[RMDB]
RNA sequence: GGGAACGACUCGAGUAGAGUCGAAAAUGCAAAAGCCCACGCCUAGUAUGAGAUCCAUUUCAGCGGUGGACACUGCGGCUGCUCAACGAGCCAAAGUUAGAGCGCAAUAUACACUAUAUUCCAGGCAACUGAUUUACUCGUUCGCGAGUAAAUCAGUAAAAGAAACAACAACAACAAC
Reactivity to 2A3 in 0.01 (KOAc 150mM, MgCl2 10mM, bicine 150mM(pH8.5), 24C), signal-to-noise 1, nucleotides 027 to 126: u130g000c020a000a010a030a080g030c000c000c040a000c000g020c020c040u060a050g050u030a090u110g000a040g000a100u060c000c070a080u050u130u150c130a040g060c040g140g010u000g040g020a040c040a010c060u080g060c070g040g020c000u070g000c040u080c030a050a100c010g060a030g120c060c040a090a090a000g070u020u020a060g030a000g060c020g060c010a060a000u080a000u020a140c030a000c060u050a040u010a030u240u060c010c010a000g050g010c010a080
Reactivity to DMS in 0.01 (KOAc 150mM, MgCl2 10mM, bicine 150mM(pH8.5), 24C), signal-to-noise 1, nucleotides 027 to 126: u000g020c080a090a070a180a190g000c000c000c050a130c160g000c040c000u000a040g000u010a040u030g000a150g010a130u000c000c040a100u000u000u000c130a040g030c090g040g030u000g010g000a110c060a020c040u000g000c220g000g000c000u010g020c000u010c040a020a040c090g000a110g000c090c060a020a070a060g010u000u000a140g000a050g030c010g010c000a080a040u010a070u000a070c060a020c120u010a080u000a090u000u000c060c070a050g000g000c150a100

The record gives the reactivity of an RNA of 177 nucleotides to 2A3 and DMS. It was measured as part of the RMDB library OK2TRN. For 2A3, 930 sequencing reads were counted. For 2A3 the reverse transcriptase was SuperScript II with manganese. For DMS, 694 sequencing reads were counted. Reactivities are given for positions 27 through 126. The reactions ran in a buffer of 150 mM KOAc, 10 mM MgCl2 and 150 mM bicine (pH 8.5), at 24 C.